Annotation: Structure probing data (DMS) for a 177-nucleotide construct. Source: RMDB library OK2TST, as collected in RNAgym. The reactions ran in a buffer of 150 mM KOAc, 10 mM MgCl2 and 150 mM bicine (pH 8.5), at 24 C.
[RMDB]
RNA sequence: GGGAACGACUCGAGUAGAGUCGAAAAGCGCUGUCCCAACUGGAGGUAGCUCCAGUCCCCCCGGCCCUGUCUCUGAAGCUCAGCGCCCUGCUCACAGGGGCUCCUGUGACCGCCUGCACACAGGCGGCCUUUUGACCCGUUUCGACGGGUCAAAAGGAAAAGAAACAACAACAACAAC
Reactivity to DMS in 0.01 (KOAc 150mM, MgCl2 10mM, bicine 150mM(pH8.5), 24C), signal-to-noise 1, nucleotides 027 to 126: g010c060g010c030u000g010u000c010c010c020a170a060c010u000g000g010a030g030g010u000a200g010c020u010c010c000a010g000u000c010c000c000c000c010c030g010g020c030c020c010u000g020u000c050u010c020u000g000a140a110g020c070u000c040a090g030c070g010c020c090c080u000g020c070u010c070a080c030a050g020g020g000g020c090u010c050c010u010g010u000g000a120c040c010g030c000c010u010g000c190a110c220a130c070a040g010g020c010g000g030